[RMDB]
RNA sequence: GGGAACGACUCGAGUAGAGUCGAAAAGCCACAGUUUGUAAGCGGCGACCAAAACUAUCUGCUGCAGAUCACUAUGUUGUCAGCAACCUUCUGGAUGCUGGCGGUGCUUAUCGAUAGCGGUUACGCGUCAGCGUGUCAAAUUCGUUUGACACGCUGAAAAAGAAACAACAACAACAAC
Reactivity to 2A3 in 0.01 (KOAc 150mM, MgCl2 10mM, bicine 150mM(pH8.5), 24C), signal-to-noise 6, nucleotides 027 to 126: g040c010c000a060c010a090g120u160u260u230g210u170a180a030g020c020g060g020c080g030a050c010c020a010a050a050a070c030u040a040u080c020u070g030c020u050g000c080a020g020a090u120c020a010c060u090a090u300g180u130u150g000u110c000a010g000c010a020a040c000c020u290u300c110u280g000g010a000u020g000c000u000g000g010c010g020g000u020g000c020u090u060a060u140c030g040a030u040a020g020c000g010g000u060u050a030c060g030c000g020
Reactivity to DMS in 0.01 (KOAc 150mM, MgCl2 10mM, bicine 150mM(pH8.5), 24C), signal-to-noise 6, nucleotides 027 to 126: g020c010c000a090c120a120g010u000u010u000g020u010a100a120g020c020g000g000c070g010a130c060c030a050a070a090a130c100u010a030u010c030u010g030c110u000g010c190a100g010a060u000c070a040c090u010a100u010g010u010u010g020u000c000a020g000c020a010a090c010c020u000u020c300u010g030g010a090u000g010c000u000g000g000c000g010g020u010g000c190u000u000a080u010c060g000a080u000a030g010c040g000g000u000u000a060c120g010c070g000
An RNA of 177 nucleotides, treated with 2A3 and DMS and read out base by base. The reactions ran in a buffer of 150 mM KOAc, 10 mM MgCl2 and 150 mM bicine (pH 8.5), at 24 C. For DMS the reverse transcriptase was MarathonRT. For 2A3 the reverse transcriptase was SuperScript II with manganese. For 2A3, 5,619 sequencing reads were counted.